Chemical mapping of a 177-nucleotide RNA with DMS and 2A3. Source: RMDB library TTRDES, as collected in RNAgym. For DMS, 13,618 sequencing reads were counted. For DMS the reverse transcriptase was MarathonRT.
RNA sequence: GGGAACGACUCGAGUAGAGUCGAAAAGAUAUGGACUAACGUCGCAGUUGCACAGCUAGUCGGAAACGACUAGCUAGCAACUGAACUACGACCGGUUAGUCCUAAGUCAAACCUCAGUUCGCUGAGGCUACUAACCCUAGUUCGCUAGGGUUAGUAGAAAAGAAACAACAACAACAAC
Reactivity to DMS in 0.01 (KOAc 150mM, MgCl2 10mM, bicine 150mM(pH8.5), 24C), signal-to-noise 9, nucleotides 027 to 126: g010a050u000a300u010g010g010a020c000u000a000a010c010g000u000c010g020c000a020g010u000u000g010c000a140c270a030g010c000u000a010g010u000c000g010g000a140a110a270c000g010a010c000u000a010g010c000u010a010g000c000a010a010c000u000g000a050a080c130u010a300c020g000a020c100c300g030g020u000u000a010g000u000c000c000u000a020a080g000u000c050a070a110a220c000c000u000c000a010g010u010u010c300g020c020u000g000a010g000g000
Reactivity to 2A3 in 0.01 (KOAc 150mM, MgCl2 10mM, bicine 150mM(pH8.5), 24C), signal-to-noise 8, nucleotides 027 to 126: g040a040u100a070u220g000g000a000c010u000a000a010c010g010u000c010g000c030a000g010u000u020g030c200a280c030a300g000c000u010a000g000u000c000g020g060a120a100a050c020g010a000c000u010a000g000c000u000a010g000c000a000a000c010u000g000a020a010c050u210a050c020g030a010c090c260g220g010u000u010a000g000u000c000c010u020a110a030g040u010c040a120a040a270c000c010u000c000a030g030u090u150c230g000c180u000g000a010g010g010